The data come from the RNA Mapping Database (RMDB), library RNAMAK. This 207-nucleotide RNA was probed chemically with 2A3. Values cover nucleotides 27 to 156. The RNA was probed in 150 mM KOAc, 10 mM MgCl2 and 150 mM bicine (pH 8.5) at 24 C.
[RMDB]
RNA sequence: GGGAACGACUCGAGUAGAGUCGAAAAAAAGGGGUCUCAGUAUUCGAACGUCAGCUUGGAUUUAUAGCAUGUAGUUCGACUGAAGCCUCCACGGUCGAACGCAGAUAUGCUAUUGUCAGCUGUUAUGGUUCCUUUACUGAGACGGAGGCACCCAAAAGCUCACAGCUAUGUUCGCAUAGCUGUGAGCAAAAGAAACAACAACAACAAC
Reactivity to 2A3 in 0.01 (KOAc 150mM, MgCl2 10mM, bicine 150mM(pH8.5), 24C), signal-to-noise 1, nucleotides 027 to 156: a000a000a000g000g020g000g000u000c000u000c010a000g010u000a010u000u010c000g000a000a000c000g020u110c070a000g010c070u190u300g140g030a040u140u300u030a060u060a000g000c000a020u070g030u060a200g000u030u000c000g000a000c000u020g000a020a000g000c000c010u070c020c000a020c030g000g000u000c000g000a020a000c020g040c170a020g040a210u130a050u160g000c000u000a000u020u100g250u210c030a000g000c010u010g070u030u100a300u250g300g000u000u000c010c000u000u000u000a010c000u000g000a010g000a000c000g000g000a000g000g000c010a090c000c010c000a000a210a000a000